Structure probing data (2A3 and DMS) for a 207-nucleotide construct. Values cover nucleotides 27 to 156. The 2A3 profile rests on 2,825 reads. The RNA was probed in 150 mM KOAc, 10 mM MgCl2 and 150 mM bicine (pH 8.5) at 24 C. For DMS the reverse transcriptase was MarathonRT.
[RMDB]
RNA sequence: GGGAACGACUCGAGUAGAGUCGAAAAUCGCAAAACCGCGGCACGUGGAGUUAGCGAGAGGAGGCUGGGUUUUGGCUUCCUUAAGCAAUCGGUCACCGAGAAGGUGUGGUCGUUACCGUGAAAUUCCGUGACAAAAUAACGUUCGCGUUAUUUUGAACUAAGUCCUCUAGUUCGCUAGAGGACUUAGAAAAGAAACAACAACAACAAC
Reactivity to 2A3 in 0.01 (KOAc 150mM, MgCl2 10mM, bicine 150mM(pH8.5), 24C), signal-to-noise 4, nucleotides 027 to 156: u070c010g010c060a040a000a050a070c070c030g010c000g040g030c040a010c010g030u150g060g080a200g060u150u180a040g030c010g000a020g010a010g040g000a010g030g000c040u090g110g170g150u120u130u210u250g040g000c000u000u000c000c000u000u000a030a000g010c010a030a050u060c000g010g010u000c000a000c010c060g050a090g120a270a090g140g030u150g010u010g060g000u010c020g020u030u090a080c010c000g000u010g040a040a040a050u080u030c010c000g030u060g040a030c010a000a000a000a000u000a000a000c010g000u030u070c210g000c000g070u010u000a000u000u000u000u010g000a050a000
Reactivity to DMS in 0.01 (KOAc 150mM, MgCl2 10mM, bicine 150mM(pH8.5), 24C), signal-to-noise 2, nucleotides 027 to 156: u000c040g020c030a050a050a070a130c050c030g030c040g000g050c020a060c040g000u000g030g040a200g000u000u000a200g020c000g010a300g000a020g020g010a000g010g030c020u000g050g040g030u000u000u000u000g020g000c020u000u000c010c000u010u000a010a300g000c020a050a060u010c000g020g050u000c020a120c000c000g000a210g040a100a140g020g010u010g000u010g040g010u010c040g020u000u000a050c010c040g030u000g000a070a090a170u000u010c020c000g030u000g010a250c020a020a000a030a040u000a000a020c010g000u000u010c270g020c050g020u000u000a000u000u010u010u000g010a090a200